[RMDB]
RNA sequence: GGGAACGACUCGAGUAGAGUCGAAAAGAUAUGGACGAUGGACAUGCUGAUGGGUCGGAAACGACCCUGCCAGCAACAGCUUUCGUCCUAAGUCAAACAUACAAGUGAGUUCGCUCACUUGUAUGAAGUGGUUGUAUCAGUUCGCUGAUACAACCACAAAAGAAACAACAACAACAAC
Reactivity to DMS in 0.01 (KOAc 150mM, MgCl2 10mM, bicine 150mM(pH8.5), 24C), signal-to-noise 2, nucleotides 027 to 126: g000a020u000a300u000g000g000a010c000g000a070u000g010g010a070c110a170u020g000c010u010g000a300u000g000g000g010u010c000g000g000a070a010a200c020g000a010c000c000c000u000g030c130c020a000g000c000a010a060c260a110g000c020u020u000u000c000g000u010c000c000u020a020a080g000u000c000a190a090a280c010a010u000a020c000a000a010g000u010g000a020g030u010u000c220g020c010u000c010a020c000u000u000g020u000a010u000g000a040a100
Reactivity to 2A3 in 0.01 (KOAc 150mM, MgCl2 10mM, bicine 150mM(pH8.5), 24C), signal-to-noise 1, nucleotides 027 to 126: g000a000u050a000u110g000g000a010c000g000a010u030g020g010a020c040a130u100g050c010u030g010a070u090g000g010g020u000c010g010g000a080a050a040c010g020a010c000c030c020u000g040c020c000a020g020c010a020a040c050a040g070c020u020u040u010c000g020u010c000c020u010a060a000g020u000c030a070a040a010c000a000u010a020c000a020a000g000u010g000a000g020u060u180c300g070c170u000c030a000c030u000u000g030u000a000u000g000a090a020